RNA sequence: GGGAACGACUCGAGUAGAGUCGAAAAGAUAUGGAGCGACAGAGCGAGGUAAGCCAACUCGGAAACGAGGGCUUACUACCCACCGCUCGUCGCUCCUAAGUCAAAGAUCGAUCUUCGGAUCGAUCAAGACUGUAUCUAGGUUCGCCUAGAUACAGUCAAAAGAAACAACAACAACAAC
Reactivity to DMS in 0.01 (KOAc 150mM, MgCl2 10mM, bicine 150mM(pH8.5), 24C), signal-to-noise 6, nucleotides 027 to 126: g010a040u000a250u010g010g000a010g010c000g000a020c000a100g020a010g010c000g010a120g020g010u000a010a000g000c010c010a110a200c010u000c000g020g000a060a050a090c010g000a010g010g010g010c010u000u000a000c010u000a030c060c080c100a300c240c010g000c000u000c010g000u000c000g000c000u000c000c010u000a000a060g010u000c020a090a110a080g000a010u000c000g010a010u000c000u000u010c220g010g000a000u000c000g000a000u000c000a050a090
Reactivity to 2A3 in 0.01 (KOAc 150mM, MgCl2 10mM, bicine 150mM(pH8.5), 24C), signal-to-noise 6, nucleotides 027 to 126: g000a000u040a020u100g000g000a000g000c010g020a010c160a300g020a090g010c030g080a160g160g100u010a000a000g000c000c040a170a300c160u000c000g010g000a040a020a020c010g010a000g020g010g000c000u000u000a000c000u020a020c030c030c010a120c050c000g000c000u000c000g000u000c000g000c000u000c000c000u000a000a000g000u000c010a040a050a110g000a000u000c000g010a000u000c010u040u110c300g140g000a000u010c000g010a000u000c000a000a020
The record gives the reactivity of an RNA of 177 nucleotides to DMS and 2A3. Values are in units of 0.01, from 0 to 300, in steps of 10. The 2A3 profile rests on 25,103 reads. The data come from the RNA Mapping Database (RMDB), library TTRDEL. Conditions: 150 mM KOAc, 10 mM MgCl2 and 150 mM bicine (pH 8.5), 24 C. The DMS profile rests on 7,805 reads. DMS adducts were read by reverse transcription with MarathonRT.